RNA sequence: GGGAACGACUCGAGUAGAGUCGAAAAAUAGGGGGAGAUGCUAGGAGUUAGAGGAGACCGAAGCGAGGAGGAAAGCAAAGAAAGCAACGGGGCUAGCAGGUGGGUGUUCCGCCUCCCGAGAGGGGACCAUAUACCGUAUCUUCGGAUACGGUAUAUGAAAAGAAACAACAACAACAAC
Reactivity to 2A3 in 0.01 (KOAc 150mM, MgCl2 10mM, bicine 150mM(pH8.5), 24C), signal-to-noise 1, nucleotides 027 to 126: a010u170a030g020g000g000g020g000a040g000a060u070g010c020u030a050g010g010a070g040u070u070a040g010a010g060g020a030g030a030c010c060g000a070a010g030c050g040a060g040g000a020g010g080a130a000a010g010c040a020a190a010g040a030a140a010g020c010a000a060c010g010g000g050g020c010u040a040g060c020a020g020g020u050g020g030g010u120g080u070u070c010c020g030c000c010u050c000c010c000g050a070g000a000g000g000g010g000a000c000
Reactivity to DMS in 0.01 (KOAc 150mM, MgCl2 10mM, bicine 150mM(pH8.5), 24C), signal-to-noise 3, nucleotides 027 to 126: a070u000a100g010g020g000g020g010a080g010a060u000g000c090u000a060g020g020a090g020u010u000a060g020a090g020g010a120g000a070c080c040g010a060a080g000c090g010a050g000g020a050g000g000a040a030a110g020c090a040a080a070g000a050a090a100g020c050a070a090c090g010g000g020g000c080u000a060g020c040a040g000g020u010g010g010g020u000g000u000u000c020c030g010c050c030u000c000c030c020g010a100g000a110g000g010g000g010a070c160